[RMDB]
This 207-nucleotide RNA was probed chemically with DMS and 2A3. Source: RMDB library OK3TST, as collected in RNAgym. DMS adducts were read by reverse transcription with MarathonRT. For 2A3, 1,553 sequencing reads were counted.
RNA sequence: GGGAACGACUCGAGUAGAGUCGAAAAAGUGCCUGGCAGAGACAGGGACCUCCAAGAUGCCUUCGAGGUUCUCCUACGGUUGGUUGGCUGGGAUGGUUUUUAAAAUGAGUAUCAGAGCUGGCUCUGGAGGAGGCACCUGCAGGUUGGAGCAGGGCCUCCGGUUUAUUAGGUUCGCCUAAUAAACCGGAAAAGAAACAACAACAACAAC
Reactivity to DMS in 0.01 (KOAc 150mM, MgCl2 10mM, bicine 150mM(pH8.5), 24C), signal-to-noise 1, nucleotides 027 to 156: a100g020u000g000c020c000u010g020g030c040a110g010a180g020a100c050a080g000g000g000a050c000c010u010c030c010a070a150g020a110u000g020c050c020u000u000c060g020a050g010g010u000u010c030u000c040c010u000a060c080g030g020u010u000g010g020u010u010g010g000c000u010g020g030g020a070u010g020g010u000u060u000u030u000a040a090a120a120u000g010a110g020u010a080u000c040a090g010a180g020c000u000g000g020c020u000c010u000g000g000a080g030g000a020g000g010c000a070c000c000u000g010c020a070g020g030u010u000g020g010a230g030c020a030g010g010g040c020c020u000
Reactivity to 2A3 in 0.01 (KOAc 150mM, MgCl2 10mM, bicine 150mM(pH8.5), 24C), signal-to-noise 2, nucleotides 027 to 156: a000g080u040g020c000c010u000g040g030c040a040g040a000g040a130c050a060g010g020g030a020c010c000u000c030c010a060a030g070a150u190g050c050c000u020u040c030g030a050g030g010u060u040c050u080c050c010u080a080c090g090g000u050u080g040g000u030u080g040g020c020u030g010g000g030a030u030g000g020u030u050u040u110u260a100a160a070a080u120g030a030g050u100a050u140c050a020g020a030g100c040u060g050g000c010u020c030u060g000g020a050g050g030a010g020g000c050a140c140c000u000g000c010a020g050g030u050u040g010g010a020g000c000a000g000g010g000c000c020u000